Chemical mapping of a 207-nucleotide RNA with 2A3 and DMS. DMS adducts were read by reverse transcription with MarathonRT. The reactions ran in a buffer of 150 mM KOAc, 10 mM MgCl2 and 150 mM bicine (pH 8.5), at 24 C. The DMS profile rests on 3,642 reads. For 2A3, 885 sequencing reads were counted.
RNA sequence: GGGAACGACUCGAGUAGAGUCGAAAACAGGACUUACAAGGCUGCAGUCAAGAUGUUGGGCAGCCUGCAUCCUCAUCUGGAGGCUCGACUAGGGAACAAUCUACUUCCAGUUUCAUUCGGAUUGUGGCAGCUUCAUCUCCUAGCAGUUGCUGGAGUGCAUGACAAAGACCUUCGGGUCUUUGUCAUGAAAAGAAACAACAACAACAAC
Reactivity to 2A3 in 0.01 (KOAc 150mM, MgCl2 10mM, bicine 150mM(pH8.5), 24C), signal-to-noise 1, nucleotides 027 to 156: c020a010g070g060a010c020u100u140a100c160a070a040g070g000c000u000g040c010a080g060u150c030a070a050g100a120u150g050u200u140g030g020g000c000a010g030c000c000u000g000c000a050u060c000c000u080c030a120u070c020u060g000g050a000g010g000c020u030c080g050a060c020u060a070g100g000g000a030a060c030a090a050u030c020u090a040c020u050u000c040c000a060g030u040u050u120c050a090u100u100c130g050g000a070u010u110g040u020g000g030c030a030g000c000u010u020c040a050u030c020u050c000c020u010a050g000c040a100g070u150u250g050c040u040g020g000a010g030u040g000
Reactivity to DMS in 0.01 (KOAc 150mM, MgCl2 10mM, bicine 150mM(pH8.5), 24C), signal-to-noise 2, nucleotides 027 to 156: c070a110g000g010a120c090u010u000a090c040a140a050g020g020c020u010g020c030a170g020u010c070a100a120g010a080u000g030u010u030g000g000g010c040a040g020c000c040u000g010c080a080u010c000c010u000c100a130u010c030u000g020g020a120g020g000c040u000c110g010a030c040u000a100g040g050g010a140a060c060a050a070u000c020u000a090c020u000u010c070c010a090g010u010u010u010c050a130u030u010c040g070g000a080u000u010g020u010g020g000c030a100g050c040u010u000c040a050u000c030u020c010c030u040a090g010c020a130g020u010u000g000c010u020g020g000a120g030u000g000